[RMDB]
RNA sequence: GGGAACGACUCGAGUAGAGUCGAAAAGGAUACUUCGGUAUCCGCUCGCGUACUACAGCGCCAAUCUUCGAAGAACUGUACAACUUCAUUCCCAAAUAGGAAUGAAGGUACAGGGAGAAGAAAAAUGCUGUAUCGCUCAUGUAGCUUUCGAGCUACAGGUCUGAAGAAGAUUCGUCUUCUUCAGACCAAAAGAAACAACAACAACAAC
Reactivity to 2A3 in 0.01 (KOAc 150mM, MgCl2 10mM, bicine 150mM(pH8.5), 24C), signal-to-noise 6, nucleotides 027 to 156: g000g000a000u060a000c020u050u140c300g080g000u000a000u000c000c020g020c010u020c050g000c000g030u060a160c040u000a000c030a000g010c010g020c020c000a040a060u020c010u010u000c010g230a300a060g010a070a040c020u000g000u000a000c040a300a250c230u010u000c000a000u000u030c030c030c040a170a300a180u240a090g000g010a000a000u000g000a000a010g000g000u000a000c000a000g010g000g010a030g000a000a000g010a010a020a000a000a000u010g010c000u000g030u070a080u300c000g010c000u060c040a070u060g000u000a000g010c010u180u150u130c300g100a000g000c000u000a000c000a000
Reactivity to DMS in 0.01 (KOAc 150mM, MgCl2 10mM, bicine 150mM(pH8.5), 24C), signal-to-noise 1, nucleotides 027 to 156: g010g000a010u010a010c000u010u010c260g020g020u000a000u000c000c040g000c060u000c060g000c060g000u000a070c030u040a040c010a020g010c000g060c050c040a060a300u000c000u000u000c060g010a210a140g000a130a230c000u000g010u010a020c030a020a040c000u030u000c000a000u000u000c010c000c000a110a130a280u000a010g000g020a050a030u010g000a000a030g060g000u000a060c010a050g000g000g000a130g000a040a040g000a010a050a140a140a050u010g000c010u000g000u000a020u000c010g000c030u030c110a210u010g000u000a010g000c000u000u000u010c270g020a080g030c000u000a040c010a060
About this RNA:
The record gives the reactivity of an RNA of 207 nucleotides to 2A3 and DMS. It was measured as part of the RMDB library RNAMAK. For 2A3, 4,944 sequencing reads were counted. The reactions ran in a buffer of 150 mM KOAc, 10 mM MgCl2 and 150 mM bicine (pH 8.5), at 24 C.